[RMDB]
RNA sequence: GGGAACGACUCGAGUAGAGUCGAAAAUGAAAAAUUUGUGACUGACAAACUUCAGGGAGAUCUCAAGGAUCUCGACUUACACUUGGGUCUCAUACUAGUCGCAUUUGCGAUUAAAACUACCUCAAGGCUCCUGCCAAGUAUUCGUACUUGGCAGGAGAAAAGAAACAACAACAACAAC
Reactivity to DMS in 0.01 (KOAc 150mM, MgCl2 10mM, bicine 150mM(pH8.5), 24C), signal-to-noise 1, nucleotides 027 to 126: u000g010a070a030a020a160a130u000u060u000g060u000g000a100c120u000g000a120c090a120a060a040c160u000u000c000a050g020g010g050a060g040a010u000c040u000c250a170a070g000g010a010u000c010u000c070g000a040c040u050u020a100c180a000c020u000u020g000g040g000u000c000u010c100a200u020a150c180u000a060g000u000c020g010c010a250u040u000u000g000c000g010a020u000u000a000a120a030a080c280u050a110c120c000u000c100a050a070g000g000
Reactivity to 2A3 in 0.01 (KOAc 150mM, MgCl2 10mM, bicine 150mM(pH8.5), 24C), signal-to-noise 1, nucleotides 027 to 126: u110g000a030a030a050a040a070u050u060u000g060u040g150a280c050u040g050a000c000a000a140a020c100u070u020c030a040g020g000g110a050g040a000u000c020u030c120a110a120g150g000a020u020c040u040c030g020a030c010u010u100a070c090a030c110u000u010g010g000g000u000c000u010c040a070u130a210c050u030a060g000u000c000g000c020a030u130u130u300g010c000g000a000u000u140a060a150a060a000c030u030a090c030c060u090c030a040a060g150g000
Notes
The record gives the reactivity of an RNA of 177 nucleotides to DMS and 2A3. For 2A3, 574 sequencing reads were counted. The RNA was probed in 150 mM KOAc, 10 mM MgCl2 and 150 mM bicine (pH 8.5) at 24 C. Reactivities are given for positions 27 through 126.